[RMDB]
RNA sequence: GGGAACGACUCGAGUAGAGUCGAAAAAAACUUUUGUGACUUCCUGAAACGGGACUAAUCUCCUCACCGAGGCUAAGCAAGUAAAAUACGCCUCUCAUAUCCUUACCUGAGGGUGGUAAGGAAAUAACCUGCAACGCUUCCUUCGGGAAGCGUUGAACUAGACGGUACUGUUCGCAGUACCGUCUAGAAAAGAAACAACAACAACAAC
Reactivity to 2A3 in 0.01 (KOAc 150mM, MgCl2 10mM, bicine 150mM(pH8.5), 24C), signal-to-noise 1, nucleotides 027 to 156: a000a000a040c230u260u200u060u080g040u110g080a130c030u040u000c000c000u050g020a100a020a010c030g030g000g000a000c000u080a060a130u090c010u000c030c010u100c020a040c000c070g000a000g000g050c050u050a010a000g090c040a050a130g000u130a050a020a050a060u090a020c050g000c010c000u000c010u010c040a060u050a030u260c000c000u000u000a020c010c040u060g100a050g030g100g000u030g030g000u000a000a030g030g010a010a010a010u030a000a010c040c100u060g030c030a000a000c020g000c000u020u000c000c000u000u130c180g030g000g000a000a000g000c000g020u000u000g000a000a010

Source: RMDB library M2RFPK, as collected in RNAgym. This 207-nucleotide RNA was probed chemically with 2A3. Conditions: 150 mM KOAc, 10 mM MgCl2 and 150 mM bicine (pH 8.5), 24 C.